[RMDB]
RNA sequence: GGGAACGACUCGAGUAGAGUCGAAAAGAGGUGCCAGGACAGGUUGCCGCCGUUGCCGUGCAGGUAGAGCACAGUGCCUUUCACCGGCACGCCUUUCUUCGCCGGCAGCCACCAGGCGCGCAGGCGAAGUCGUGCUCAGGUUCGCCUGAGCACGACUAAAAGAAACAACAACAACAAC
Reactivity to DMS in 0.01 (KOAc 150mM, MgCl2 10mM, bicine 150mM(pH8.5), 24C), signal-to-noise 4, nucleotides 027 to 126: g020a110g010g000u000g020c020c010a080g030g010a090c140a110g010g000u010u010g030c020c040g040c200c020g010u010u000g010c300c040g030u000g010c020a050g010g010u010a060g000a080g020c030a120c180a200g030u020g020c070c020u000u000u010c140a050c060c070g000g000c000a000c020g010c290c080u000u010u000c040u010u000c000g040c270c010g010g010c030a050g000c000c010a060c120c110a120g030g000c010g030c080g000c070a050g000g030c090g010a090
Reactivity to 2A3 in 0.01 (KOAc 150mM, MgCl2 10mM, bicine 150mM(pH8.5), 24C), signal-to-noise 2, nucleotides 027 to 126: g060a040g000g070u030g010c020c020a010g020g020a150c080a160g000g020u040u010g000c010c000g000c000c000g020u020u060g100c060c020g010u030g020c030a030g010g000u090a070g010a020g030c070a050c150a160g060u040g040c000c000u070u210u100c080a040c040c000g010g000c000a010c010g000c000c000u210u250u050c060u010u030c000g030c010c000g000g000c020a000g020c010c000a020c000c010a000g010g000c010g000c050g000c040a000g080g030c050g060a020